[RMDB]
RNA sequence: GGGAACGACUCGAGUAGAGUCGAAAAUCGCAAGCCUAUACUGUGCGGUGAACAUUCUAGUAGGCCGCCUCAACAGAGGACGUCUAUGAAUGGUGAGGGAGCCAACCCUUGUAAUUGCAAAGCGUGGGAUCAACCGUCCAUUCGUGGACGGUUGAUCAAAAGAAACAACAACAACAAC
Reactivity to 2A3 in 0.01 (KOAc 150mM, MgCl2 10mM, bicine 150mM(pH8.5), 24C), signal-to-noise 2, nucleotides 027 to 126: u080c040g010c120a070a040g020c050c070u090a030u020a140c100u040g110u100g110c020g020g010u000g000a020a020c000a020u040u000c090u080a100g000u000a010g040g050c090c130g000c000c000u050c030a190a300c120a040g000a000g000g010a020c000g000u000c010u010a020u220g000a010a000u040g010g010u120g010a000g000g010g000a030g000c000c020a030a010c050c000c000u000u030g040u040a050a110u140u140g010c030a000a000a000g000c020g040u090g030g050
Reactivity to DMS in 0.01 (KOAc 150mM, MgCl2 10mM, bicine 150mM(pH8.5), 24C), signal-to-noise 1, nucleotides 027 to 126: u000c090g040c050a160a060g000c030c060u000a140u010a180c080u000g050u000g000c010g000g000u040g010a250a070c010a010u000u000c060u040a100g070u000a010g000g000c030c200g040c040c000u010c000a130a200c040a180g050a000g000g000a060c010g030u000c000u000a020u040g000a000a020u000g020g000u010g000a030g030g020g060a100g000c170c180a040a120c000c000c000u000u000g000u000a010a030u000u010g020c010a030a110a150g000c010g040u060g010g020